Chemical mapping of a 177-nucleotide RNA with 2A3 and DMS.
It was measured as part of the RMDB libraries RFM100 and RFMREP.
RNA sequence: GGGAACGACUCGAGUAGAGUCGAAAACGGGAAACUGAGGCUAAUCCUGAAUAGCGUUCUCACCCUGGAGUGGGGAGAACGUGAAAUGCUCCGGCGCCAGAGGAUGUGGCUGCGGCCGAUUAGGUAGAUUAGCUCAAAGUUUCGACUUUGAGCUAAUAAAAGAAACAACAACAACAAC
Reactivity to 2A3 in 0.01 (KOAc 150mM, MgCl2 10mM, bicine 150mM(pH8.5), 24C), signal-to-noise 8, nucleotides 027 to 126: c020g000g020g030a060a060a050c050u070g030a040g060g030c030u040a040a050u050c010c000u030g040a080a070u060a030g000c000g000u010u000c050u040c070a300c000c000c030u140g170g170a210g150u200g020g000g000g000a000g010a000a000c000g000u010g000a010a000a020u130g000c020u020c020c030g040g000c010g030c010c010a020g020a030g060g050a050u090g050u060g130g000c050u060g010c030g040g000c000c010g040a070u060u100a050g020g020u020a040g030
Reactivity to DMS in 0.01 (KOAc 150mM, MgCl2 10mM, bicine 150mM(pH8.5), 24C), signal-to-noise 7, nucleotides 027 to 126: c080g000g000g010a040a060a090c080u010g010a110g000g010c020u000a110a100u010c010c010u000g000a090a060u010a250g000c000g000u000u000c000u000c010a100c010c000c010u010g020g020a130g020u020g000g010g000g010a010g010a000a000c000g010u000g000a060a090a080u030g010c020u000c050c050g000g010c070g000c040c040a050g000a100g000g000a080u010g020u000g000g000c020u000g020c070g020g000c020c020g000a090u020u010a060g000g020u010a090g010